[RMDB]
RNA sequence: GGGAACGACUCGAGUAGAGUCGAAAACAAGGCGUUCGCGCCUUGAAAAAGAUAUGGAAUCUUUCAACGCCCUCAACUAAGACAGGGACUCGGAAACGAGUCCUCGAGUUGUGGGUAUCAAGAUUCCUAAGUCAAAAAAGACUGCUUCGGCAGUCAACUAUUGUAGUAACUUCGGUUACUACAAUAGAAAAGAAACAACAACAACAAC
Reactivity to 2A3 in 0.01 (KOAc 150mM, MgCl2 10mM, bicine 150mM(pH8.5), 24C), signal-to-noise 4, nucleotides 027 to 156: c000a000a000g000g000c000g040u110u170c300g030c010g050c090c010u000u000g010a020a010a000a000a000g060a020u080a020u110g000g000a010a000u010c010u010u050u050c090a060a030c050g000c000c000c000u000c000a010a000c010u090a180a080g100a170c090a160g020g010g010a000c000u000c000g030g040a080a090a070c020g000a000g000u000c000c000u010c020g030a010g010u000u000g000u020g000g000g000u000a000u020c020a000a000g000a000u000u020c000c000u010a080a030g040u040c020a000a040a080a020a000a160g030a000c010u020g010c000u040u070c190g100g000c000a000g000u000c000a000a000
Reactivity to DMS in 0.01 (KOAc 150mM, MgCl2 10mM, bicine 150mM(pH8.5), 24C), signal-to-noise 2, nucleotides 027 to 156: c010a010a020g020g010c000g060u010u000c260g030c020g010c000c000u000u000g000a030a070a110a230a110g000a070u000a300u010g010g000a040a010u000c000u000u000u000c130a080a090c060g000c010c000c000u000c000a000a060c020u000a200a160g020a270c300a030g020g000g000a020c000u000c010g020g000a120a110a290c020g010a010g000u000c010c000u000c020g000a040g040u010u000g000u000g000g010g030u000a010u000c040a050a020g000a010u010u010c000c000u000a060a100g010u000c030a020a040a150a160a170a170g000a010c000u000g010c000u000u000c300g070g010c000a020g000u000c000a020a090